[RMDB]
RNA sequence: GGGAACGACUCGAGUAGAGUCGAAAAAGACAUACGUGCCUGCUGGCUUGUCACUUCCAAUACAUGCUGUGGUCCCACCAUCCCGUCCAUGUAGAGAGAGUGACAGGUUGUCGGGCCUCAAACAUAGGAACCCUAAAGAGUUCGCUCUUUAGGGUUCAAAAGAAACAACAACAACAAC
Reactivity to 2A3 in 0.01 (KOAc 150mM, MgCl2 10mM, bicine 150mM(pH8.5), 24C), signal-to-noise 1, nucleotides 027 to 126: a020g090a010c020a100u210a090c060g080u110g000c000c000u000g000c020u020g000g040c000u000u020g000u010c020a010c010u090u040c010c010a000a040u030a000c000a020u020g000c050u110g100u170g060g000u070c030c070c000a070c000c020a070u050c050c020c020g010u010c010c010a020u050g000u000a010g020a000g000a010g010a000g040u000g020a000c000a000g000g000u000u000g030u000c000g000g010g020c000c000u020c010a150a150a070c010a000u150a080g140
Reactivity to DMS in 0.01 (KOAc 150mM, MgCl2 10mM, bicine 150mM(pH8.5), 24C), signal-to-noise 2, nucleotides 027 to 126: a070g000a100c100a140u020a100c150g020u000g050c010c000u000g000c030u000g000g000c010u000u020g000u010c000a010c020u000u020c020c000a050a200u000a010c010a000u000g010c160u000g020u020g030g020u000c040c030c120a130c110c120a090u020c040c010c020g000u000c150c020a000u000g000u000a000g000a300g000a070g020a000g030u000g020a020c020a000g000g020u000u000g010u000c010g030g020g000c010c050u020c090a040a100a080c100a170u010a070g020
Conditions: 150 mM KOAc, 10 mM MgCl2 and 150 mM bicine (pH 8.5), 24 C. Chemical mapping of a 177-nucleotide RNA with 2A3 and DMS.